[RMDB]
RNA sequence: GGGAACGACUCGAGUAGAGUCGAAAAAUGCAGGAGGUAAAAUGUGGAGGGUUUUUACAGCAAGGGCCGUUUGGACACCUAUAAACAUCUCGAACAAUGAUUGUAUGGUAUUGGUUGGGCUGUAACCAAUUGUAGGGAUAUUCGUAUCCCUACAAUUAAAAGAAACAACAACAACAAC
Reactivity to 2A3 in 0.01 (KOAc 150mM, MgCl2 10mM, bicine 150mM(pH8.5), 24C), signal-to-noise 4, nucleotides 027 to 126: a020u100g010c040a020g020g060a020g010g030u090a060a100a090a080u150g040u080g070g040a060g030g020g000u000u060u000u100u080a030c020a010g000c010a020a020g010g000g010c010c000g010u080u080u100g000g000a020c040a040c030c010u050a060u110a090a040a000c010a020u030c080u040c080g070a080a030c060a070a060u070g050a080u060u090g020u090a090u130g050g000u050a040u080u090g040g020u020u040g010g020g010c020u010g010u060a040a040c030c000
Reactivity to DMS in 0.01 (KOAc 150mM, MgCl2 10mM, bicine 150mM(pH8.5), 24C), signal-to-noise 9, nucleotides 027 to 126: a080u010g010c060a070g000g010a050g010g010u010a050a050a090a090u010g020u000g010g010a090g010g000g010u000u000u010u010u010a050c070a050g010c070a080a090g010g000g020c030c040g010u000u010u000g020g010a100c120a050c030c010u000a060u000a060a050a080c040a020u000c030u000c090g010a080a100c190a080a040u000g010a080u000u000g000u000a040u010g010g010u000a070u000u000g010g010u000u000g010g010g000c030u000g000u000a040a080c170c080
An RNA of 177 nucleotides, treated with 2A3 and DMS and read out base by base. DMS adducts were read by reverse transcription with MarathonRT. The reactions ran in a buffer of 150 mM KOAc, 10 mM MgCl2 and 150 mM bicine (pH 8.5), at 24 C. 2A3 adducts were read by reverse transcription with SuperScript II with manganese.